[RMDB]
RNA sequence: GGGAACGACUCGAGUAGAGUCGAAAACGUGUGGAAGGCGGAAUAGGGUACAGAUCAAGUCGGCGGCUCGUUCCAUUUUCUCAUUUCGAACCAGAGCCAGCUGAUUGAUGGUUUGGGUGAGAAAUGGCCUCCAUUUAGGAUUCGUCCUAAAUGGAGGAAAAGAAACAACAACAACAAC
Reactivity to DMS in 0.01 (KOAc 150mM, MgCl2 10mM, bicine 150mM(pH8.5), 24C), signal-to-noise 6, nucleotides 027 to 126: c100g020u020g020u010g000g000a070a040g010g000c070g000g000a110a090u010a080g020g000g010u010a060c130a090g000a060u010c060a040a090g020u000c020g000g020c070g000g010c050u000c040g000u020u010c010c060a060u030u010u010u020c020u010c040a070u000u000u030c080g000a070a040c030c060a080g010a060g010c050c020a080g020c040u000g010a080u020u010g000a090u000g000g010u000u010u010g010g000g000u010g010a150g000a000a030a040u000g000g000
Reactivity to 2A3 in 0.01 (KOAc 150mM, MgCl2 10mM, bicine 150mM(pH8.5), 24C), signal-to-noise 9, nucleotides 027 to 126: c030g040u070g010u040g070g040a080a060g030g010c030g020g070a080a110u140a110g050g000g020u060a050c050a040g070a070u070c040a050a060g110u030c020g020g020c010g020g000c020u020c030g020u060u020c010c010a020u100u040u060u020c050u000c010a040u040u170u250c030g010a000a000c010c010a040g010a020g110c030c030a040g030c060u110g060a200u130u110g050a050u040g020g000u020u020u030g050g000g000u030g010a020g010a010a020a010u050g030g010